[RMDB]
RNA sequence: GGGAACGACUCGAGUAGAGUCGAAAAGAUAUGGACCCAGCGCAUUUAUAGGCUGCUUUGAUCAUACUUACGUCGGAAACGACGUAAGUAUGGGAGCAGCUCCUAUAUUCAACUGGGUCCUAAGUCAUCAAAGAGAGUACUUCGGUACUCUCUUUGAAAAAGAAACAACAACAACAAC
Reactivity to DMS in 0.01 (KOAc 150mM, MgCl2 10mM, bicine 150mM(pH8.5), 24C), signal-to-noise 2, nucleotides 027 to 126: g000a070u000a300u010g000g000a000c000c000c000a010g010c080g020c290a130u010u010u000a020u010a010g010g010c020u010g000c000u000u000u010g010a210u010c000a000u000a010c000u000u000a010c010g020u000c010g010g000a140a060a300c010g000a000c000g010u000a000a000g000u000a010u000g000g000g010a010g010c000a010g010c180u000c050c020u000a010u000a010u000u000c280a260a130c010u000g000g010g000u000c000c010u000a030a080g010u010c060a230